The record gives the reactivity of an RNA of 177 nucleotides to 2A3 and DMS. 2A3 adducts were read by reverse transcription with SuperScript II with manganese.

[RMDB]
RNA sequence: GGGAACGACUCGAGUAGAGUCGAAAAGCACCGCCGCAGUGCAGCCAACCGCCGACCGCACACACGCUGCCCGAGCCUGCUGCUGUCGCAGUCUUACCCGGUCCGGGGCCGGACCCGGGUAGGCGUAAGCAGUAAUAGGUUUCGACCUAUUACUGCUAAAAGAAACAACAACAACAAC
Reactivity to 2A3 in 0.01 (KOAc 150mM, MgCl2 10mM, bicine 150mM(pH8.5), 24C), signal-to-noise 4, nucleotides 027 to 126: g020c000a020c020c040g060c030c020g000c070a020g020u030g050c020a010g040c020c020a040a070c040c040g040c020c010g030a030c020c030g010c020a020c000a010c010a010c090g020c030u050g010c000c000c010g030a030g030c000c030u040g010c020u020g000c010u050g060u110c060g000c090a040g030u000c010u040u050a020c010c000c000g010g000u000c000c000g040g000g260g050c140c020g030g010a050c100c180c000g000g010g000u010a010g000g000c010g030u040a040
Reactivity to DMS in 0.01 (KOAc 150mM, MgCl2 10mM, bicine 150mM(pH8.5), 24C), signal-to-noise 8, nucleotides 027 to 126: g000c040a090c040c040g020c050c040g030c060a100g020u000g000c040a100g010c050c050a090a120c090c050g020c050c020g000a070c060c050g020c050a070c080a090c100a070c100g000c020u000g010c020c010c020g000a090g010c040c030u000g000c050u010g010c020u000g010u000c070g010c090a090g010u010c020u000u000a030c010c000c000g010g000u000c000c000g010g010g010g010c160c020g010g000a020c050c030c050g020g000g010u000a000g000g000c100g020u010a080
Source information
It was measured as part of the RMDB library OK2TRN. Conditions: 150 mM KOAc, 10 mM MgCl2 and 150 mM bicine (pH 8.5), 24 C. Reactivities are rounded to 0.1 and cut off at 0 and 3. DMS adducts were read by reverse transcription with MarathonRT.